[RMDB]
About this RNA:
Structure probing data (DMS and 2A3) for a 170-nucleotide construct. Reactivities are rounded to 0.1 and cut off at 0 and 3. For 2A3 the reverse transcriptase was SuperScript II with manganese. For DMS, 46,139 sequencing reads were counted. It was measured as part of the RMDB library 15KLIB.
RNA sequence: GGGAACGACUCGAGUAGAGUCGAAAAACGUUGAUAAGGAUUUACUCCGAGGAGACGAACUACCACGAACAGGGUAAACUCUACCCGUGGCGUCUCCGUUUGACGAGUAAGUCCUAAGUCAACAUGCUAGGUGGAAUGUUCGCAUUCCACAAAAGAAACAACAACAACAAC
Reactivity to DMS in 0.01 (KOAc 150mM, MgCl2 10mM, bicine 150mM(pH8.5), 24C), signal-to-noise 5, nucleotides 027 to 129: a010c160g010u000u040g010a000u020a140a000g000g000a020u000u000u000a030c050u000c000c000g020a070g040g000a000g000a000c030g040a040a020c050u090a250c020c000a030c030g020a090a180c160a110g010g030g050u000a030a000a090c100u070c040u030a010c110c060c000g010u000g030g000c030g040u010c020u020c000c020g020u050u030u050g040a190c300g000a000g000u000a030a030g050u020c000c000u000a000a000g010u000c010a000a000c010a070u060g050c040u030a080g060
Reactivity to 2A3 in 0.01 (KOAc 150mM, MgCl2 10mM, bicine 150mM(pH8.5), 24C), signal-to-noise 9, nucleotides 027 to 129: a010c070g000u000u000g000a000u010a060a000g000g000a000u000u000u000a000c000u000c010c010g010a040g000g000a000g030a000c010g010a060a050c100u200a090c080c010a010c010g070a140a060c070a190g020g000g030u070a080a080a070c110u100c020u110a020c000c010c010g000u000g000g000c000g000u000c000u000c010c000g000u090u040u090g010a010c000g000a000g000u000a010a000g000u000c000c000u000a000a000g010u000c000a000a010c000a010u110g060c020u130a080g070